[RMDB]
RNA sequence: GGGAACGACUCGAGUAGAGUCGAAAAUAAACGAGCCUAAUCGCGUCUUGACGUGAGUGGGAUAGCCUAGACUGUAGGCUAUCCCAAGUGUGCAUAGCGCACAAUACGCUGAUCUACAGUCAAAGAACGCUAACUAAUAGUUCGCUAUUAGUUAGCGAAAAGAAACAACAACAACAAC
Reactivity to 2A3 in 0.01 (KOAc 150mM, MgCl2 10mM, bicine 150mM(pH8.5), 24C), signal-to-noise 9, nucleotides 027 to 126: u230a010a110a020c110g020a020g050c010c010u060a060a050u060c010g000c000g040u020c040u110u240g090a050c030g040u050g030a050g040u060g010g000g000a000u000a000g000c000c000u020a080g010a060c010u020g020u020a000g000g000c000u000a000u000c000c000c000a000a000g000u000g000u010g000c060a150u160a220g070c030g000c030a000c000a010a020u090a030c050g000c050u070g030a080u030c020u070a010c000a000g000u010c000a020a060a030g080a090a010
Reactivity to DMS in 0.01 (KOAc 150mM, MgCl2 10mM, bicine 150mM(pH8.5), 24C), signal-to-noise 7, nucleotides 027 to 126: u010a040a080a130c180g000a080g010c010c060u010a070a100u000c020g010c010g010u010c060u000u000g010a080c070g020u000g010a060g010u000g000g010g000a010u000a000g010c000c000u000a060g010a020c010u000g010u000a020g000g000c000u000a000u000c000c000c000a000a010g010u000g010u000g000c020a160u010a150g020c160g010c000a020c010a050a060u000a060c210g000c010u000g010a070u000c160u010a000c000a010g010u000c010a140a100a110g010a090a120
Chemical mapping of a 177-nucleotide RNA with 2A3 and DMS.
Values cover nucleotides 27 to 126.
The DMS profile rests on 10,319 reads.
The 2A3 profile rests on 34,338 reads.
2A3 adducts were read by reverse transcription with SuperScript II with manganese.
For DMS the reverse transcriptase was MarathonRT.